[RMDB]
RNA sequence: GGGAACGACUCGAGUAGAGUCGAAAAGAUGAAGUGAGAAGAGACUGUAAGAACGGCUAACUGAGCAGACAGAUACAGACGGCAAGUAUCGUCGCCAGAGAUACAGUCGCAAGUAGCCGAAGGAAGAACUCCCUGGGUGAUUCGUCACCCAGGGAGUAAAAGAAACAACAACAACAAC
Reactivity to DMS in 0.01 (KOAc 150mM, MgCl2 10mM, bicine 150mM(pH8.5), 24C), signal-to-noise 1, nucleotides 027 to 126: g000a040u040g000a030a000g000u000g000a050g000a160a030g000a100g040a010c000u000g000u000a000a170g000a060a110c070g000g000c000u000a280a120c050u000g000a060g000c010a110g000a000c000a090g010a020u000a040c070a010g000a130c130g050g060c080a000a070g000u000a030u000c010g000u000c000g000c000c000a000g020a030g020a210u060a090c000a010g000u000c000g030c090a000a070g000u000a070g000c000c000g020a090a040g040g020a060a050g020a150
Reactivity to 2A3 in 0.01 (KOAc 150mM, MgCl2 10mM, bicine 150mM(pH8.5), 24C), signal-to-noise 2, nucleotides 027 to 126: g120a030u300g030a020a000g090u070g000a030g080a300a000g020a020g000a000c000u060g020u060a050a090g210a220a050c010g000g040c040u030a000a010c000u020g050a030g130c140a020g030a000c000a020g030a020u000a030c000a110g110a030c030g170g000c000a030a030g020u000a000u000c030g000u000c120g040c000c000a010g020a000g000a000u000a130c020a020g000u050c000g000c000a000a140g060u050a000g000c020c010g000a210a000g030g000a050a050g030a020
The record gives the reactivity of an RNA of 177 nucleotides to DMS and 2A3. For DMS, 1,369 sequencing reads were counted. The RNA was probed in 150 mM KOAc, 10 mM MgCl2 and 150 mM bicine (pH 8.5) at 24 C. It was measured as part of the RMDB library OK1LIB. The 2A3 profile rests on 678 reads.